This 177-nucleotide RNA was probed chemically with 2A3.
[RMDB]
RNA sequence: GGGAACGACUCGAGUAGAGUCGAAAAGCACUCAUAUUACCACCUUACUCCCAGCUGCGUAGGUCUUGGUUAGAUAUGUUUUAGGCGGCGUGAACAUAUCAUUGGCUCAGGAUAAAUAUUAAUUAGGGUCCGUUUGCUGGUUCGCCAGCAAACGGACAAAAGAAACAACAACAACAAC
Reactivity to 2A3 in 0.01 (KOAc 150mM, MgCl2 10mM, bicine 150mM(pH8.5), 24C), signal-to-noise 1, nucleotides 027 to 126: g050c050a060c080u000c030a130u030a090u240u170a000c000c000a000c000c000u020u000a060c030u010c000c000c000a020g030c000u110g000c000g090u000a000g030g080u080c090u120u160g000g060u020u000a000g000a000u000a000u020g000u000u000u000u000a220g020g000c050g000g050c000g050u000g000a000a000c000a000u110a000u000c000a130u000u170g000g030c000u000c200a000g060g040a000u250a000a060a030u280a030u000u300a100a150u060u200a110g160g000

The 2A3 profile rests on 274 reads.